[RMDB]
RNA sequence: GGGAACGACUCGAGUAGAGUCGAAAAUCUGAAGAGUUCGCUCUUCAGAAAAUACCGAGAGUCAACCUCGGUAGAGUUGACUAAGCCUUGGAAACAAGGGAAAAACGGAAUGGUUCGCCAUUCCGAACCUCUAACGAAUCUUCGGAUUCGUUAGAGGAAAAGAAACAACAACAACAAC
Reactivity to DMS in 0.01 (KOAc 150mM, MgCl2 10mM, bicine 150mM(pH8.5), 24C), signal-to-noise 1, nucleotides 027 to 126: u000c000u000g020a000a000g000a000g010u000u000c300g060c010u000c000u020u000c000a010g000a010a020a100a130u000a160c050c000g010a080g000a140g000u020c050a040a030c060c000u000c050g000g020u030a010g000a100g010u000u010g000a040c010u000a090a190g000c010c000u000u000g020g000a170a090a200c030a000a000g010g000g010a000a030a000a120a150c000g000g000a000a020u000g010g020u000u000c200g030c000c000a010u010u000c000c000g010a020a060
Reactivity to 2A3 in 0.01 (KOAc 150mM, MgCl2 10mM, bicine 150mM(pH8.5), 24C), signal-to-noise 1, nucleotides 027 to 126: u000c000u010g020a010a000g040a010g020u050u130c190g060c070u000c000u000u000c000a010g000a030a040a010a000u080a030c000c030g030a020g020a030g110u000c000a000a020c020c030u010c050g060g000u020a040g020a000g030u020u060g050a000c030u030a060a070g090c000c020u030u010g000g010a020a070a000c010a020a000g030g020g020a030a110a030a040a030c010g000g000a000a010u020g000g080u060u090c300g070c090c000a000u000u000c000c000g000a000a040
Overview: The record gives the reactivity of an RNA of 177 nucleotides to DMS and 2A3. Reactivities are given for positions 27 through 126. Conditions: 150 mM KOAc, 10 mM MgCl2 and 150 mM bicine (pH 8.5), 24 C. Reactivities are rounded to 0.1 and cut off at 0 and 3. 2A3 adducts were read by reverse transcription with SuperScript II with manganese.